[RMDB]
RNA sequence: GGGAACGACUCGAGUAGAGUCGAAAAGACCUCUCUGUGCUUAGGGCAAACACUCAUUUGGCCUUAAAUGGGAUCCUGUGAGAGGGGGUCCCUCCAUUGGCAGCUGGACUGUUCUUUGGGGCCUUAUCAACAACUAUUAGUUCGCUAAUAGUUGUUGAAAAGAAACAACAACAACAAC
Reactivity to 2A3 in 0.01 (KOAc 150mM, MgCl2 10mM, bicine 150mM(pH8.5), 24C), signal-to-noise 6, nucleotides 027 to 126: g050a010c000c010u000c010u020c040u090g090u070g100c010u100u150a150g090g080g030c020a040a090a010c070a040c070u080c050a180u060u060u210g030g000c000c000u040u050a020a030a030u020g000g010g000a010u020c010c000u100g040u090g070a050g000a020g060g010g000g010g000u000c000c000c000u000c010c000a020u000u000g010g010c020a010g010c020u190g100g090a300c020u030g020u300u300c010u090u010u010g000g010g000g010c000c010u020u040a050u020
Reactivity to DMS in 0.01 (KOAc 150mM, MgCl2 10mM, bicine 150mM(pH8.5), 24C), signal-to-noise 3, nucleotides 027 to 126: g010a130c020c010u000c020u010c020u010g030u000g020c050u000u020a110g010g010g020c070a090a090a070c160a070c090u010c100a120u010u000u010g020g010c020c030u000u010a010a010a090u000g010g020g000a010u000c010c010u000g000u010g000a050g010a090g010g000g000g010g010u000c000c000c000u000c010c000a000u000u000g000g010c010a010g010c050u000g010g010a240c010u000g010u000u010c010u000u000u000g010g010g000g010c020c010u000u000a050u000

An RNA of 177 nucleotides, treated with 2A3 and DMS and read out base by base. The RNA was probed in 150 mM KOAc, 10 mM MgCl2 and 150 mM bicine (pH 8.5) at 24 C. 2A3 adducts were read by reverse transcription with SuperScript II with manganese. It was measured as part of the RMDB library RFMREP.